[RMDB]
RNA sequence: GGGAACGACUCGAGUAGAGUCGAAAAGAUGAUUAGUUCGCUAAUCAUCAAAGAACGCUGCAACGCGCAGAGAGCGCGCGAGAGCGAGUAUGCGCGAAGAAAAAAGUUACGGGUUCGCCCGUAACAAUCUCAUAUGGUGGUUCGCCACCAUAUGAGAAAAAGAAACAACAACAACAAC
Reactivity to 2A3 in 0.01 (KOAc 150mM, MgCl2 10mM, bicine 150mM(pH8.5), 24C), signal-to-noise 1, nucleotides 027 to 126: g000a000u000g010a000u010u010a000g020u020u040c110g010c110u000a000a000u000c000a000u010c000a020a000a000g040a080a010c010g050c100u100g000c070a120a080c030g000c000g000c080a000g110a030g020a030g130c060g050c010g010c050g180a050g010a030g080c020g010a000g040u040a030u070g020c040g000c060g080a110a170g080a050a200a030a040a010a010g000u000u000a000c000g000g010g060u030u060c240g030c020c050c000g010u020a010a000c000a000a010
Reactivity to DMS in 0.01 (KOAc 150mM, MgCl2 10mM, bicine 150mM(pH8.5), 24C), signal-to-noise 2, nucleotides 027 to 126: g040a010u000g010a020u000u000a010g000u000u020c190g030c020u010a000a010u000c000a000u010c010a090a110a160g000a180a110c100g000c100u000g000c060a080a090c000g010c000g000c000a130g000a180g020a160g000c040g010c000g040c060g010a230g000a100g010c010g000a030g010u000a090u000g000c040g020c010g050a110a110g020a010a030a090a130a100a090g000u000u000a000c000g000g000g000u000u020c220g000c000c000c000g010u000a000a000c000a020a030
An RNA of 177 nucleotides, treated with 2A3 and DMS and read out base by base. Conditions: 150 mM KOAc, 10 mM MgCl2 and 150 mM bicine (pH 8.5), 24 C. For DMS the reverse transcriptase was MarathonRT. The data come from the RNA Mapping Database (RMDB), library M2PK50. As a SHAPE reagent, 2A3 marks flexible, mostly unpaired nucleotides at the ribose 2'-OH. Values cover nucleotides 27 to 126.